The record gives the reactivity of an RNA of 177 nucleotides to DMS and 2A3. For 2A3, 2,587 sequencing reads were counted. DMS adducts were read by reverse transcription with MarathonRT. Values cover nucleotides 27 to 126.

RNA sequence: GGGAACGACUCGAGUAGAGUCGAAAAAGAUGAAGUGCUUAACAUCUCUCUAUUUCAGAGCACCAUCUUGUGUCCCAAGGAUCCAGUAAACUGGACCUCUGACCAGAAAAGAUGUACCAUGGCAUGCGCCCAUUGUAAGAUUCGUCUUACAAUGGGCAAAAGAAACAACAACAACAAC
Reactivity to DMS in 0.01 (KOAc 150mM, MgCl2 10mM, bicine 150mM(pH8.5), 24C), signal-to-noise 6, nucleotides 027 to 126: a000g000a010u000g000a190a110g030u000g010c000u000u010a090a130c160a060u000c080u010c130u010c090u010a100u010u000u010c160a160g000a020g000c020a010c010c010a010u000c000u000u000g000u000g010u000c000c010c010a150a060g000g010a110u000c000c000a010g000u010a100a150a150c030u000g000g000a030c020c010u000c110u000g020a070c080c070a060g010a090a070a120a080g000a040u000g010u000a040c090c050a060u000g000g020c050a100u010g010c230
Reactivity to 2A3 in 0.01 (KOAc 150mM, MgCl2 10mM, bicine 150mM(pH8.5), 24C), signal-to-noise 3, nucleotides 027 to 126: a000g010a000u020g020a290a060g000u010g000c020u070u050a120a090c090a230u050c040u020c050u010c000u200a260u120u240u150c090a030g000a000g030c010a000c020c000a000u000c000u010u040g050u030g070u020c000c000c000a010a030g010g000a150u010c000c000a000g030u220a050a130a300c020u030g000g010a000c000c000u040c090u090g100a080c020c010a050g070a030a140a030a000g080a020u030g010u040a030c010c040a020u060g030g000c050a060u140g020c070